Structure probing data (2A3) for a 207-nucleotide construct.
RNA sequence: GGGAACGACUCGAGUAGAGUCGAAAAGUUAUGCUCUCGCUGCCUAAUGGCGGUGCGGGAAACCCACUCAAAAGUCCUUAGGGUUAGCCCCUUAAGGCGGGGUUCGGAGGCACCUGGCAACAGAAGCUGAAACUGUGCACAUUCGUGUGCACAGUAAGAGGAAUGGGGUAUUCGUACCCCAUUCCUCAAAAGAAACAACAACAACAAC
Reactivity to 2A3 in 0.01 (KOAc 150mM, MgCl2 10mM, bicine 150mM(pH8.5), 24C), signal-to-noise 2, nucleotides 027 to 156: g170u240u220a050u300g040c000u000c000u000c000g010c010u050g040c000c000u300a300a030u280g020g000c030g010g150u030g000c050g020g000g000a070a060a050c000c030c040a030c070u130c110a000a180a000a000g300u000c000c000u000u000a000g010g000g000u110u080a080g000c010c030c000c030u030u060a000a000g000g010c020g000g000g000g000u050u140c090g000g070a060g030g030c000a000c000c000u030g300g000c000a000a000c000a050g000a000a000g010c000u010g000a100a010a000c000u000g000u000g000c000a000c000a020u030u070c230g080u080g000u010g000c000a000c000a000g000u000a000a020